RNA sequence: GGGAACGACUCGAGUAGAGUCGAAAAAGUCUGGCAGCUACACCGUUAGAAACCUUGCGUUUGGUGAUUAUGGGCAUAACAUUGGCAAUGCCCUUUUCUCAUGCUUGGUUGCUGUCUGGUAUUAUUCCUAAUCAAUAAAUUUCGAUUUAUUGAUUAGAAAAGAAACAACAACAACAAC
Reactivity to DMS in 0.01 (KOAc 150mM, MgCl2 10mM, bicine 150mM(pH8.5), 24C), signal-to-noise 9, nucleotides 027 to 126: a130g010u000c010u000g000g000c010a030g010c020u010a130c130a130c150c130g010u010u020a100g010a120a060a030c010c010u000u000g010c030g010u010u010u010g020g010u010g000a030u000u000a020u020g020g000g000c000a010u000a080a090c080a270u020u020g020g020c180a080a030u000g000c000c000c000u000u000u000u000c010u000c010a040u010g000c010u000u000g000g010u000u000g010c010u000g000u000c020u000g010g000u000a060u010u010a140u010u000c030
Reactivity to 2A3 in 0.01 (KOAc 150mM, MgCl2 10mM, bicine 150mM(pH8.5), 24C), signal-to-noise 9, nucleotides 027 to 126: a000g060u020c020u020g010g010c000a000g000c010u090a050c100a090c080c080g130u100u100a080g080a080a050a010c000c000u010u030g010c010g140u070u070u090g090g020u080g020a010u010u030a110u220g000g000g010c010a010u070a120a050c060a190u160u270g160g000c090a030a020u020g000c000c000c000u000u000u000u000c000u000c000a010u020g000c000u010u020g010g010u010u060g000c000u000g010u000c020u030g020g020u080a100u210u060a080u080u070c000